[RMDB]
This 177-nucleotide RNA was probed chemically with DMS and 2A3. For 2A3, 14,597 sequencing reads were counted. The reactions ran in a buffer of 150 mM KOAc, 10 mM MgCl2 and 150 mM bicine (pH 8.5), at 24 C.
RNA sequence: GGGAACGACUCGAGUAGAGUCGAAAAGAGUAAAUAGAGGAGUCAGGGUUCGCACCUGCUCCGCGAACCUAGGGUAACACUGACUAUGGAGCGAAAGAGAGAGCAGACGAAGAUACGUCUGCAUAGAGGUAUAAUCACUGUUCGCAGUGAUUAUACCAAAAGAAACAACAACAACAAC
Reactivity to DMS in 0.01 (KOAc 150mM, MgCl2 10mM, bicine 150mM(pH8.5), 24C), signal-to-noise 6, nucleotides 027 to 126: g020a100g020u020a030a080a070u030a080g000a090g010g010a040g000u010c040a080g010g000g010u000u010c040g010c030a090c120c050u020g000c010u010c020c050g000c010g000a020a020c010c010u010a110g010g000g000u010a080a040c110a180c060u000g010a100c090u010a080u030g020g000a030g030c040g000a060a060a080g010a120g010a120g030a080g010c000a000g000a010c000g000a170a130g010a190u020a080c030g000u000c000u000g000c010a040u010a020g000a160
Reactivity to 2A3 in 0.01 (KOAc 150mM, MgCl2 10mM, bicine 150mM(pH8.5), 24C), signal-to-noise 9, nucleotides 027 to 126: g060a000g060u160a020a070a150u180a060g090a030g100g040a030g030u080c030a020g010g010g030u040u040c020g000c030a070c030c050u030g000c000u010c000c000g000c000g000a010a020c010c020u050a040g070g020g050u080a100a010c050a030c070u050g040a010c010u060a120u240g020g010a020g010c030g080a030a120a000g150a000g020a000g010a010g000c000a010g000a000c000g020a050a040g090a150u150a130c010g010u000c000u000g010c000a000u030a000g070a020